[RMDB]
RNA sequence: GGGAACGACUCGAGUAGAGUCGAAAAGCUACAACACACAUAGCCCUGUACCUACAUAGGGAUUCUCAAUGAAACUCAGUGAGGAAGAUACAUCAUCAUCAUCAUCCCUACUCUAUCGAUGAAGAAACCUGAUGAGCCUUCUAGCACCAGGUGUCAACCAUCCGUCAUUAUUCGUAAUGACGGAUGGAAAAGAAACAACAACAACAAC
Reactivity to 2A3 in 0.01 (KOAc 150mM, MgCl2 10mM, bicine 150mM(pH8.5), 24C), signal-to-noise 7, nucleotides 027 to 156: g040c020u090a050c060a200a030c030a020c030a000c020a140u090a060g020c020c010c020u030g030u100a110c040c040u070a100c050a130u160a050g010g000g040a030u100u000c040u010c030a080a220u150g050a110a040a040c060u060c070a050g020u010g070a030g060g000a050a030g020a050u110a130c050a080u030c000a020u010c000a010u010c000a010u020c030a020u050c030c000c010u050a110c040u050c030u120a070u180c070g040a020u060g020a030a050g060a070a090a030c030c030u060g020a060u030g030a050g030c010c010u060u050c040u080a030g030c010a010c040c000a020g000g040u030g040u050c030a030a040
Reactivity to DMS in 0.01 (KOAc 150mM, MgCl2 10mM, bicine 150mM(pH8.5), 24C), signal-to-noise 3, nucleotides 027 to 156: g010c020u010a080c020a070a130c100a100c120a080c090a220u000a100g000c010c000c020u020g010u000a200c020c050u010a080c100a130u010a100g020g020g000a180u000u000c010u000c010a070a120u010g060a100a030a090c050u060c040a080g070u010g010a300g020g000a060a060g010a120u000a060c060a070u000c060a050u010c050a090u010c020a150u000c020a090u010c000c020c010u000a100c090u020c060u000a100u000c040g030a050u000g020a090a100g000a110a050a060c040c020u000g010a080u000g010a100g000c060c020u010u010c030u010a110g010c010a040c010c020a050g020g040u010g010u010c030a070a220
The record gives the reactivity of an RNA of 207 nucleotides to 2A3 and DMS. It was measured as part of the RMDB library OK3TST. Values cover nucleotides 27 to 156. The reactions ran in a buffer of 150 mM KOAc, 10 mM MgCl2 and 150 mM bicine (pH 8.5), at 24 C.